This 207-nucleotide RNA was probed chemically with 2A3 and DMS.
For DMS the reverse transcriptase was MarathonRT.
The RNA was probed in 150 mM KOAc, 10 mM MgCl2 and 150 mM bicine (pH 8.5) at 24 C.
For 2A3, 12,357 sequencing reads were counted.
[RMDB]
RNA sequence: GGGAACGACUCGAGUAGAGUCGAAAAGAUCGAAGUCUCAGAGGAUCCUGAAGCUAGGAGACUUCUCAGGAAGCUCUCUCUGAGAGACUAGUCAGUCCUGACUUCAGUCGACUAGAGUCAGGAGAGAGACUUCCUAGCUUCUCGAUCUCUCCUAGGACGUAGAUGAAAAAUUCGUUUUUCAUCUACGAAAAGAAACAACAACAACAAC
Reactivity to 2A3 in 0.01 (KOAc 150mM, MgCl2 10mM, bicine 150mM(pH8.5), 24C), signal-to-noise 8, nucleotides 027 to 156: g090a050u170c070g060a080a020g070u020c020u010c100a010g010a010g020g010a010u010c000c010u010g010a010a000g010c000u010a000g000g030a040g030a080c000u090u010c040u030c030a080g110g030a030a030g000c010u000c000u000c010u000c030u090g050a080g030a010g010a210c020u000a000g030u020c060a050g070u070c030c030u070g100a210c040u180u160c160a050g020u090c040g040a040c030u050a030g020a030g170u020c020a020g050g000a000g000a000g000a000g000a010c000u050u010c000c000u010a000g000c000u010u020c010u000c010g000a000u000c080u020c010u000c060c020u050a060g030g030a000
Reactivity to DMS in 0.01 (KOAc 150mM, MgCl2 10mM, bicine 150mM(pH8.5), 24C), signal-to-noise 3, nucleotides 027 to 156: g030a100u000c050g000a110a120g010u000c010u000c070a170g000a110g020g000a060u000c020c030u000g010a050a070g030c040u010a020g010g020a130g010a170c000u000u000c020u000c030a120g000g000a090a100g020c050u000c030u010c020u000c040u000g010a160g020a110g010a100c040u020a070g000u000c040a170g000u000c060c000u000g010a060c060u010u000c050a070g030u000c100g010a150c040u000a070g000a090g020u010c010a220g000g000a030g010a040g000a070g000a090c050u000u000c010c000u000a030g000c030u000u000c010u000c040g000a040u000c000u010c010u010c010c030u000a090g000g000a170